This 177-nucleotide RNA was probed chemically with DMS and 2A3.
RNA sequence: GGGAACGACUCGAGUAGAGUCGAAAACCAUGUUUGGUGCUGGUGAAGCAGUGGGUAGGGAAAGAAGUGGAACCAUCAGCACAGCUUUAUACGGCACCGCUGGCGAUGACCGUGGACCCGUACGAGCAGUGCGUCGGAGGUUCGCCUCCGACGCACUAAAAGAAACAACAACAACAAC
Reactivity to DMS in 0.01 (KOAc 150mM, MgCl2 10mM, bicine 150mM(pH8.5), 24C), signal-to-noise 1, nucleotides 027 to 126: c000c030a100u010g000u000u000u010g100g000u000g030c040u000g040g060u050g020a080a080g000c040a090g070u030g020g010g050u000a140g000g020g000a090a010a110g010a150a090g060u030g000g030a080a090c060c010a090u000c000a090g000c020a000c000a010g000c070u000u000u050a090u050a110c000g000g000c200a050c000c000g000c050u000g000g000c060g000a100u100g030a180c110c030g000u000g000g000a130c090c010c040g070u030a100c090g000a010g000c030
Reactivity to 2A3 in 0.01 (KOAc 150mM, MgCl2 10mM, bicine 150mM(pH8.5), 24C), signal-to-noise 1, nucleotides 027 to 126: c000c040a050u060g120u030u060u230g060g000u000g000c000u000g030g020u000g000a040a030g060c050a000g050u030g070g040g030u080a230g000g030g030a030a150a120g010a230a000g150u200g030g080a060a050c040c000a070u050c070a000g130c000a000c010a010g000c000u040u020u020a030u060a030c000g000g000c000a050c010c010g000c050u040g020g000c010g050a140u160g060a070c010c010g000u090g020g000a080c030c000c000g010u000a040c010g000a020g050c050
Notes:
The reactions ran in a buffer of 150 mM KOAc, 10 mM MgCl2 and 150 mM bicine (pH 8.5), at 24 C. 2A3 is a SHAPE reagent: it acylates the 2'-hydroxyl of flexible nucleotides of all four kinds.